[RMDB]
RNA sequence: GGGAACGACUCGAGUAGAGUCGAAAAGCAGUUCCAGAGUCUGUGGACUCUGAAUACUAGCGGUCAGUCGUCGUCCACAGACGACGUGAAGUGAUUAUGAGAAUGAUCACACUGACGACGUAUUCUCAUAUGUCCUAUCGCUAGGAACUGGAUAGGCCACUUGGAUCAUCUUCGGAUGAUCCAAGUGAAAAGAAACAACAACAACAAC
Reactivity to 2A3 in 0.01 (KOAc 150mM, MgCl2 10mM, bicine 150mM(pH8.5), 24C), signal-to-noise 4, nucleotides 027 to 156: g040c010a010g010u010u020c030c000a000g000a010g010u040c050u110g150u280g160g010a000c000u000c020u020g030a020a010u050a070c030u020a040g150c060g040g000u010c020a020g040u010c020g020u000c000g000u040c030c070a140c030a160g000a010c000g000a000c000g070u100g110a120a030g020u020g040a010u000u020a010u050g080a030g060a130a060u060g020a040u040c010a020c010a010c040u060g020a020c050g020a010c030g050u080a050u030u050c050u010c030a030u040a080u120g060u060c010c000u030a030u060c030g050c100u010a030g060g020a050a050c010u000g020g000a040u050a050g040g000c030
Reactivity to DMS in 0.01 (KOAc 150mM, MgCl2 10mM, bicine 150mM(pH8.5), 24C), signal-to-noise 2, nucleotides 027 to 156: g020c040a040g020u000u000c010c010a010g000a090g020u000c040u010g080u000g080g020a030c010u000c030u020g010a030a060u000a120c030u000a070g050c010g050g010u010c050a050g000u000c050g020u000c020g010u000c040c130a200c260a180g010a050c000g000a020c030g020u010g000a140a110g030u000g020a150u000u000a040u010g010a260g020a230a060u000g000a020u000c020a070c030a300c090u000g010a110c100g030a060c040g020u000a060u000u000c030u030c100a100u000a030u010g020u020c020c030u000a060u000c020g000c040u020a120g000g000a040a010c030u000g020g050a120u000a090g010g050c070